Chemical mapping of a 177-nucleotide RNA with 2A3 and DMS.
The reactions ran in a buffer of 150 mM KOAc, 10 mM MgCl2 and 150 mM bicine (pH 8.5), at 24 C.
It was measured as part of the RMDB library OK2TST.
2A3 adducts were read by reverse transcription with SuperScript II with manganese.
RNA sequence: GGGAACGACUCGAGUAGAGUCGAAAAUGGUGAAGAACAUUCCAUGGAAAAUCCUUUGUGUGUCCACCCUAUAAAACUGAAGAGGUUCCUGGUGCACGUUCUCUUUUCCAGCGCCUUCCAGCAUGCAACCUAAGCUGCUAUUCGUAGCAGCUUAGGUAAAAGAAACAACAACAACAAC
Reactivity to 2A3 in 0.01 (KOAc 150mM, MgCl2 10mM, bicine 150mM(pH8.5), 24C), signal-to-noise 1, nucleotides 027 to 126: u140g020g000u080g020a140a140g040a110a000c000a050u080u080c030c000a020u050g000g020a020a190a120a090u130c050c010u030u050u050g120u020g040u030g050u010c010c010a020c050c010c000u110a100u090a210a130a050a030c110u060g080a100a000g110a100g090g030u000u050c000c020u040g060g000u040g070c030a030c070g030u100u020c010u030c000u030u110u050u030c020c000a030g000c040g020c010c000u040u010c000c020a020g040c010a010u100g010c040a000
Reactivity to DMS in 0.01 (KOAc 150mM, MgCl2 10mM, bicine 150mM(pH8.5), 24C), signal-to-noise 2, nucleotides 027 to 126: u010g010g000u000g000a140a060g000a080a040c030a090u010u010c060c020a040u000g010g000a030a010a060a110u010c020c000u010u000u000g030u010g010u010g000u000c030c090a100c040c020c050u000a110u020a050a050a170a120c090u010g000a060a040g010a090g010g010u000u000c020c010u010g020g010u000g000c090a080c060g000u000u000c030u000c020u000u000u000u000c020c040a080g000c100g010c030c040u020u000c050c030a090g000c100a100u010g010c120a160